[RMDB]
RNA sequence: GGGAACGACUCGAGUAGAGUCGAAAAUCACAGAUUCACCAAAGCUGAAAGGGCUGAGGAGCUCAUGGUAGCCUGGGCUGACCUACUCUGGAGCACGGUGUCUUCCUUCUAAACUGAGUGACUGUAGUACUAUCUGUGCCUCUGAUGGUAAUAAAAAAUAUUUUAGCAUCUUCGGAUGCUAAAAUAUAAAAGAAACAACAACAACAAC
Reactivity to DMS in 0.01 (KOAc 150mM, MgCl2 10mM, bicine 150mM(pH8.5), 24C), signal-to-noise 2, nucleotides 027 to 156: u000c030a070c050a110g020a150u010u000c020a060c010c010a080a100a150g000c040u000g000a120a150a120g030g000g020c030u010g000a180g000g020a090g000c020u000c050a070u010g040g020u020a010g030c060c020u000g000g040g040c020u010g020a120c070c000u000a040c030u000c040u000g010g030a110g010c030a100c100g010g020u000g000u010c020u000u000c010c020u000u010c030u000a060a080a140c040u000g000a180g010u000g000a050c070u020g000u000a110g000u000a040c040u000a050u000c050u000g020u000g020c030c020u000c050u000g010a070u010g010g000u000a060a100u010a030a040a070a070a100
Reactivity to 2A3 in 0.01 (KOAc 150mM, MgCl2 10mM, bicine 150mM(pH8.5), 24C), signal-to-noise 3, nucleotides 027 to 156: u090c010a020c020a070g040a090u080u090c020a010c030c000a060a080a000g010c020u050g060a150a040a060g040g040g000c030u040g050a040g030g040a040g000c000u000c030a050u070g020g020u140a030g060c020c060u020g030g010g000c040u070g080a130c010c000u050a050c030u000c050u090g100g030a020g000c040a020c060g030g000u010g010u030c020u020u060c000c010u030u080c040u140a160a150a100c040u050g050a020g060u070g050a050c040u060g040u090a030g050u010a070c020u020a050u070c040u030g070u060g050c020c000u080c020u040g030a090u080g030g010u050a060a070u170a130a160a030a050a000
Notes:
The record gives the reactivity of an RNA of 207 nucleotides to DMS and 2A3. The RNA was probed in 150 mM KOAc, 10 mM MgCl2 and 150 mM bicine (pH 8.5) at 24 C. For 2A3 the reverse transcriptase was SuperScript II with manganese.